RNA sequence: GGGAACGACUCGAGUAGAGUCGAAAAGAUAUGGAAUCUUUGAUAUGCCUAAUGUACUUCAACAGCCUGUCGAUCGGAAACGAUCGCAGGACAUGAAGACAUUAGGCAUAUCAAAGAUUCCUAAGUCGAGUAAAUUGAGGUUCGCCUCAAUUUACUCAAAAGAAACAACAACAACAAC
Reactivity to DMS in 0.01 (KOAc 150mM, MgCl2 10mM, bicine 150mM(pH8.5), 24C), signal-to-noise 2, nucleotides 027 to 126: g020a100u000a300u000g000g000a030a000u000c000u000u000u000g000a020u000a000u010g010c000c000u000a000a000u000g020u000a130c000u000u010c010a000a110c250a200g000c000c000u000g000u020c040g010a010u000c000g010g010a130a100a190c010g000a000u000c000g030c000a010g000g000a000c100a100u010g000a010a010g000a030c010a010u000u000a000g000g010c000a000u000a000u010c000a000a010a000g000a000u000u000c000c000u010a010a060g010u020c110